[RMDB]
RNA sequence: GGGAACGACUCGAGUAGAGUCGAAAAGAUAUGGAUAGUUGACAUGUCUUAUCUCGGAAACGAGAUGGAGACAACAGCAAUCAUCCUAAGUCAAAGCUGAUCCAUAUCUUCGGAUAUGGAUCAGCAAGUUAUUCGGACAGUUCGCUGUCCGAAUAACAAAAGAAACAACAACAACAAC
Reactivity to DMS in 0.01 (KOAc 150mM, MgCl2 10mM, bicine 150mM(pH8.5), 24C), signal-to-noise 3, nucleotides 027 to 126: g000a000u000a300u010g000g000a030u000a010g000u010u000g000a060c090a260u000g030u000c010u000u010a040u000c000u000c010g000g000a060a050a120c010g000a020g000a000u000g000g030a000g010a020c000a050a050c270a150g000c020a010a020u000c060a020u000c000c000u030a050a150g010u000c050a060a110a180g000c000u000g010a010u000c000c000a000u010a000u000c000u010u010c200g030g000a010u000a000u000g000g000a010u000c000a000g010c000a000a030
Reactivity to 2A3 in 0.01 (KOAc 150mM, MgCl2 10mM, bicine 150mM(pH8.5), 24C), signal-to-noise 1, nucleotides 027 to 126: g020a040u050a040u090g010g030a010u020a090g000u000u020g080a140c080a200u180g010u000c000u030u000a010u000c010u000c000g030g030a070a060a030c000g000a010g000a010u030g100g030a030g000a000c000a090a030c030a050g000c000a000a050u070c010a000u020c010c010u010a080a030g090u070c060a170a030a030g000c010u000g000a020u000c000c000a000u010a000u010c020u020u050c230g050g000a000u000a000u000g000g000a010u010c000a010g000c000a010a000